[RMDB]
RNA sequence: GGGAACGACUCGAGUAGAGUCGAAAAUAGCAGGACAUAGCCGUUAUGCGCGAAGCGGUGUAGCGUCACUUUGAUGGUGGUACUAUGAAUUGAUGCAAGGUGUGGAGCGACCUUAAACAGUUCUGGUUUGACGGCUUUCAGUUCGCUGAAAGCCGAAGGGUUAUAAAGGAUUCGUCCUUUAUAACCCAAAAGAAACAACAACAACAAC
Reactivity to 2A3 in 0.01 (KOAc 150mM, MgCl2 10mM, bicine 150mM(pH8.5), 24C), signal-to-noise 5, nucleotides 027 to 156: u130a010g020c050a020g030g010a030c040a070u080a020g030c020c000g030u070u070a070u180g040c070g010c020g060a040a020g020c020g010g030u030g020u060a030g020c020g040u040c020a030c100u100u100u120g080a110u080g020g030u010g010g030u050a040c030u050a050u120g050a060a060u100u070g050a050u070g040c040a030a020g000g010u030g020u080g010g010a010g010c010g000a010c000c000u080u140a080a060a010c020a010g000u020u010c010u030g050g020u020u070u140g050a020c010g000g000c000u000u000u000c000a000g000u010u070c100g000c080u000g000a000a000a000g000c000c000g000a000a000
Reactivity to DMS in 0.01 (KOAc 150mM, MgCl2 10mM, bicine 150mM(pH8.5), 24C), signal-to-noise 1, nucleotides 027 to 156: u000a080g000c010a010g000g010a110c050a120u000a100g030c050c040g010u000u000a090u000g040c050g000c000g020a120a070g030c030g010g030u010g050u000a030g050c040g020u000c030a080c000u000u010u000g010a160u010g010g050u000g000g000u000a060c030u000a030u010g010a050a140u000u000g010a090u000g000c080a100a060g000g000u000g030u000g070g000a130g040c050g000a090c020c030u000u020a040a060a100c040a050g000u000u000c010u000g020g020u020u000u000g020a220c040g020g000c000u000u020u000c010a000g010u000u000c260g060c030u000g000a010a000a010g040c010c000g020a020a040